[RMDB]
RNA sequence: GGGAACGACUCGAGUAGAGUCGAAAAGAUAUGGAGCCUGUCUAGAACUACAAGAGGCAUCGGAAACGAUGUUCUCUUGCUAGACAUCAGGGCUCCUAAGUCAAACUGGCCAGUUCGCUGGCCAGAAGACCUAUAUAGUCUUCGGACUAUAUAGGUCAAAAGAAACAACAACAACAAC
Reactivity to DMS in 0.01 (KOAc 150mM, MgCl2 10mM, bicine 150mM(pH8.5), 24C), signal-to-noise 4, nucleotides 027 to 126: g020a040u010a300u010g000g010a000g000c010c020u000g020u010c000u000a010g000a110a040c130u020a300c020a020a000g010a010g000g000c000a000u000c000g000g000a110a120a200c020g000a010u000g020u000u010c000u000c000u000u000g000c000u000a000g000a010c010a180u010c270a160g010g010g010c000u000c000c000u000a010a060g000u000c040a130a150a300c000u000g000g020c000c000a020g010u000u010c230g030c000u000g010g000c000c000a000g010a050a120
Reactivity to 2A3 in 0.01 (KOAc 150mM, MgCl2 10mM, bicine 150mM(pH8.5), 24C), signal-to-noise 4, nucleotides 027 to 126: g020a020u080a050u130g000g020a000g000c050c060u100g140u000c000u010a030g010a210a180c190u210a080c300a030a010g010a000g000g000c000a000u000c010g040g010a060a040a040c010g000a010u010g030u300u120c000u010c000u010u000g000c010u000a000g010a000c000a020u160c100a040g030g020g020c000u020c000c000u000a020a010g020u020c020a050a060a160c000u000g010g000c000c000a010g000u050u090c280g080c200u000g000g030c000c000a000g000a010a010